An RNA of 177 nucleotides, treated with DMS and read out base by base.

RNA sequence: GGGAACGACUCGAGUAGAGUCGAAAAUCCCACUUCAACAUGUCCCGCAUCAGGCUGGUGUGGAAUCGCAUCUGGGCGGUGCUGUCGGACUUCUUUGUGGAGGUGGGCUGCCACAAGAACCUGCAGGAUCCCCCUAAUUCUUCGGAAUUAGGGGGAUAAAAGAAACAACAACAACAAC
Reactivity to DMS in 0.01 (KOAc 150mM, MgCl2 10mM, bicine 150mM(pH8.5), 24C), signal-to-noise 1, nucleotides 027 to 126: u010c000c000c000a140c080u010u000c040a070a040c080a080u000g000u000c030c000c030g010c030a030u000c020a050g010g000c060u000g030g030u010g040u010g000g000a160a070u010c100g020c020a010u000c030u000g030g000g010c020g000g000u000g010c010u000g030u030c120g020g000a040c140u020u010c050u000u010u000g020u010g000g000a070g000g030u010g000g000g020c080u010g020c020c030a040c040a060a080g000a080a080c040c070u010g020c140a070g020g030